[RMDB]
The data come from the RNA Mapping Database (RMDB), library OK1LIB. This 177-nucleotide RNA was probed chemically with 2A3. Reactivities are given for positions 27 through 126.
RNA sequence: GGGAACGACUCGAGUAGAGUCGAAAACUUCGUAAAACUGCGUCGCACCACGCUCACUGAUCGGAAGUCCUCCCAAAACGGCGAUUUUAUCGAAUGCGAGACUUCCGCCUUCGAUCCUAAAUCCUAAGGUGCAACGGCUUUUCGAAGCCGUUGCACCAAAAGAAACAACAACAACAAC
Reactivity to 2A3 in 0.01 (KOAc 150mM, MgCl2 10mM, bicine 150mM(pH8.5), 24C), signal-to-noise 1, nucleotides 027 to 126: c000u100u050c040g030u050a010a000a020a060c050u070g040c050g060u100c090g000c020a040c010c000a000c000g020c030u090c000a020c000u050g040a020u050c090g020g050a010a000g070u030c010c010u150c010c070c000a000a150a070a000c010g130g000c020g060a020u000u100u020u010a150u120c010g000a010a020u050g000c020g020a000g030a120c030u060u010c070c000g040c000c000u060u000c020g080a120u140c000c000u130a230a210a100u000c000c010u010a070a080